[RMDB]
RNA sequence: GGGAACGACUCGAGUAGAGUCGAAAAAACUCUUUAACGCAAUAACGAACUAAUUCUAAGCAAGUAAUGGAGAAAUGCCAGGGUCACUAUCUAGCCAUAAUAGUGCUUGACAGUAUGAUACUAACUGAAUAUGGUAAACCGUUCGCGGUUUACCAAAACAUGUAUCUUCGUUCGCGAAGAUACAUGUAAAAGAAACAACAACAACAAC
Reactivity to DMS in 0.01 (KOAc 150mM, MgCl2 10mM, bicine 150mM(pH8.5), 24C), signal-to-noise 2, nucleotides 027 to 156: a020a020c050u020c000u010u000u010a060a050c030g030c070a060a120u000a100a100c080g030a110a160c060u000a070a050u000u020c060u000a110a120g040c060a080a060g020u000a060a040u000g000g020a110g020a090a070a040u020g000c000c030a070g020g010g020u020c030a070c040u000a010u000c000u020a050g020c060c050a100u000a060a120u040a070g000u000g010c020u000u010g010a040c020a020g020u000a060u000g030a090u000a090c060u000a060a160c050u000g010a080a080u010a090u000g000g010u000a000a030a010c000c010g040u000u000c300g020c010g030g010u010u000u000a000c000c000a000a020a040
Reactivity to 2A3 in 0.01 (KOAc 150mM, MgCl2 10mM, bicine 150mM(pH8.5), 24C), signal-to-noise 2, nucleotides 027 to 156: a000a000c080u090c040u130u070u050a150a030c040g000c070a060a060u060a110a060c050g060a010a030c010u050a050a040u070u000c020u140a000a070g030c030a110a020g100u080a060a090u090g070g000a030g040a100a070a000u070g040c000c060a030g020g000g000u000c010a000c000u000a010u080c000u000a020g060c000c010a020u040a140a070u080a200g050u070g000c040u060u070g040a020c000a010g030u060a080u140g050a030u070a090c070u030a220a000c000u020g090a090a050u250a070u180g010g000u000a000a000a000c000c000g000u010u030c190g020c020g040g030u000u000u000a000c000c000a010a000a000